[RMDB]
RNA sequence: GGGAACGACUCGAGUAGAGUCGAAAAUUGUGUCAUUUGUAUUCCAACAGCAAGUGGCACUAACUUUCGGGCAGUUGGAAUACCUGGAAGUGACUCAGUGCUCCUAAUCUAAGUACUGAGUGAACUUGUCAACUAAGAUUAGGAGUUGGCAAGUGUAUAUAGUAAUGGUAUUCGUACCAUUACUAUAAAAAGAAACAACAACAACAAC
Reactivity to DMS in 0.01 (KOAc 150mM, MgCl2 10mM, bicine 150mM(pH8.5), 24C), signal-to-noise 5, nucleotides 027 to 156: u000u010g020u000g020u000c010a020u000u010u000g030u000a110u000u010c070c220a120a140c100a250g010c020a020a020g050u000g020g000c000a020c020u000a030a030c010u000u000u000c020g010g020g070c030a070g020u000u010g000g010a260a120u000a020c010c030u010g000g000a040a040g020u000g000a100c000u000c000a030g020u000g000c000u000c040c030u000a110a160u000c180u000a060a040g020u000a010c000u010g010a060g010u000g010a050a050c010u000u000g010u000c010a020a020c010u010a100a160g010a300u000u000a140g020g010a060g010u000u000g010g000c010a010a030g010u000g020u010a120
Reactivity to 2A3 in 0.01 (KOAc 150mM, MgCl2 10mM, bicine 150mM(pH8.5), 24C), signal-to-noise 3, nucleotides 027 to 156: u110u070g000u000g010u010c000a010u010u010u010g070u090a160u190u170c110c060a080a050c040a110g020c000a010a010g010u010g000g000c000a000c010u010a030a020c000u010u020u010c010g000g010g000c030a160g020u060u100g100g040a100a060u060a080c000c000u000g010g010a020a010g020u010g030a010c000u000c000a000g000u000g010c000u040c030c040u100a130a160u110c050u090a050a010g000u000a010c000u000g000a000g000u020g010a000a010c000u000u000g000u010c010a000a000c000u030a060a060g120a300u130u190a090g200g010a030g020u000u000g000g000c000a000a000g000u010g030u010a090